[RMDB]
RNA sequence: GGGAACGACUCGAGUAGAGUCGAAAAGAUAUGGAUCAGUCUGGAGCUUGCGUUCGGAAACGAACGACAAGCGUUGAAAGACUGAGUCCUAAGUCAAAAGUGUCACCCUGUUCGCAGGGUGACACAAUCUUAGAGAGUGGUUCGCCACUCUCUAAGAAAAAGAAACAACAACAACAAC
Reactivity to DMS in 0.01 (KOAc 150mM, MgCl2 10mM, bicine 150mM(pH8.5), 24C), signal-to-noise 2, nucleotides 027 to 126: g000a000u000a010u010g000g000a050u000c000a000g000u000c000u010g030g000a010g030c000u000u000g010c010g020u000u000c020g010g010a010a010a020c000g000a000a000c000g000a100c010a020a000g010c000g010u010u010g000a240a230a020g000a020c000u010g010a030g010u000c000c000u010a000a110g000u000c000a070a060a110a120g000u000g010u000c000a010c010c000c000u000g000u000u020c170g010c010a000g000g000g020u000g000a010c000a000c000a010a030
An RNA of 177 nucleotides, treated with DMS and read out base by base. For DMS, 4,152 sequencing reads were counted. DMS adducts were read by reverse transcription with MarathonRT.